[RMDB]
RNA sequence: GGGAACGACUCGAGUAGAGUCGAAAAUAGUGUCACGUACGGACGUGUAAUAGGAAGGCGCGUGACGCUGAUAGUAUUGAACUCCUGACUCCAUCCAACUGUCGUGAACGCGUCACCACGUGGUAUGACUUCCAUGAAUUUUCGAAUUCAUGGAAGUAAAAGAAACAACAACAACAAC
Reactivity to DMS in 0.01 (KOAc 150mM, MgCl2 10mM, bicine 150mM(pH8.5), 24C), signal-to-noise 9, nucleotides 027 to 126: u040a040g020u010g000u010c010a030c010g010u010a120c100g000g000a240c030g030u010g000u030a090a120u040a100g000g010a180a140g000g010c080g000c030g000u000g000a050c030g010c010u000g000a060u020a060g010u010a090u020u020g010a080a080c060u010c020c020u000g000a090c050u010c030c030a070u000c060c050a060a070c060u010g000u000c020g010u000g010a190a070c070g000c030g000u000c020a100c060c020a060c050g010u010g000g010u000a050u020g010
Reactivity to 2A3 in 0.01 (KOAc 150mM, MgCl2 10mM, bicine 150mM(pH8.5), 24C), signal-to-noise 9, nucleotides 027 to 126: u170a010g020u010g010u020c010a010c020g020u060a020c060g040g080a020c050g060u100g050u120a160a220u100a120g140g050a100a050g060g000c050g000c010g050u010g010a030c000g000c010u010g010a050u060a070g100u080a090u080u150g060a060a040c020u020c020c010u020g030a050c020u000c020c010a070u040c020c010a050a030c050u060g040u090c020g040u030g040a050a020c030g000c000g030u020c010a020c040c010a020c030g030u030g010g030u090a110u120g060